[RMDB]
RNA sequence: GGGAACGACUCGAGUAGAGUCGAAAAGCGUCACAUGCGUAUCGGUGAUGAUCGCGUGCUUGGCAUCCACCGUGCGGUGGUCCAGAUAGAAGAACCCCUUCGGCUUGUCGUCCCGCACCAUGUAGCACGUACCGUAAUGAUUCGUCAUUACGGUACGAAAAGAAACAACAACAACAAC
Reactivity to 2A3 in 0.01 (KOAc 150mM, MgCl2 10mM, bicine 150mM(pH8.5), 24C), signal-to-noise 9, nucleotides 027 to 126: g050c050g040u030c020a010c010a050u050g030c030g070u200a040u060c040g070g160u220g100a170u160g010a010u070c020g000c010g020u030g020c060u080u080g010g000c020a060u050c010c000a020c010c030g130u220g100c180g000g010u020g010g000u000c000c010a020g040a100u150a060g130a130a030g040a070a080c010c000c000c030u010u030c010g030g010c030u030u080g020u020c010g020u010c000c010c000g000c010a030c030c020a120u230g070u150a020g050c030a010
Reactivity to DMS in 0.01 (KOAc 150mM, MgCl2 10mM, bicine 150mM(pH8.5), 24C), signal-to-noise 8, nucleotides 027 to 126: g020c110g010u010c040a160c030a010u000g010c030g020u010a030u000c020g020g020u010g010a170u010g000a020u000c050g010c020g020u000g010c100u000u000g010g010c180a120u010c030c020a040c030c020g010u010g020c140g010g030u000g000g010u000c040c040a080g010a170u010a070g010a080a080g010a070a170c030c030c020c030u000u010c040g010g010c040u000u010g010u000c050g000u010c010c010c010g000c130a070c110c070a070u010g010u010a070g010c120a210